[RMDB]
RNA sequence: GGGAACGACUCGAGUAGAGUCGAAAAACUUUUCUAGCCUAUUCAGCUUCGCGUCCUUGAGGCCUGGCGUAACGCGGCUCUUGCCACCAGGAAGCCUCCGCUAGUCGAGCGGACUUGGUCUCUAUCCGCCCAAAGCCCUUUUUCUCUCAUCUGAGCUACCUAUCAUCUUGUUCGCAAGAUGAUAGGUAAAAGAAACAACAACAACAAC
Reactivity to 2A3 in 0.01 (KOAc 150mM, MgCl2 10mM, bicine 150mM(pH8.5), 24C), signal-to-noise 2, nucleotides 027 to 156: a000c060u140u110u070u020c070u080a050g000c010c000u060a120u090u070c070a050g040c040u070u140c050g030c040g020u070c010c030u050u100g020a010g000g040c000c000u000g020g000c030g040u090a110a050c100g010c020g060g000c010u020c060u050u090g040c020c020a040c010c020a000g050g010a190a010g010c030c020u010c000c000g000c020u070a060g200u170c120g080a030g030c000g000g000a000c010u080u090g030g010u010c010u010c000u040a070u010c030c030g020c000c020c050a060a010a010g040c030c000c000u050u100u040u100u060c040u000c000u010c020a210u000c080u120g030a050g090c030u040
Chemical mapping of a 207-nucleotide RNA with 2A3.
For 2A3 the reverse transcriptase was SuperScript II with manganese.
The reactions ran in a buffer of 150 mM KOAc, 10 mM MgCl2 and 150 mM bicine (pH 8.5), at 24 C.
The 2A3 profile rests on 1,275 reads.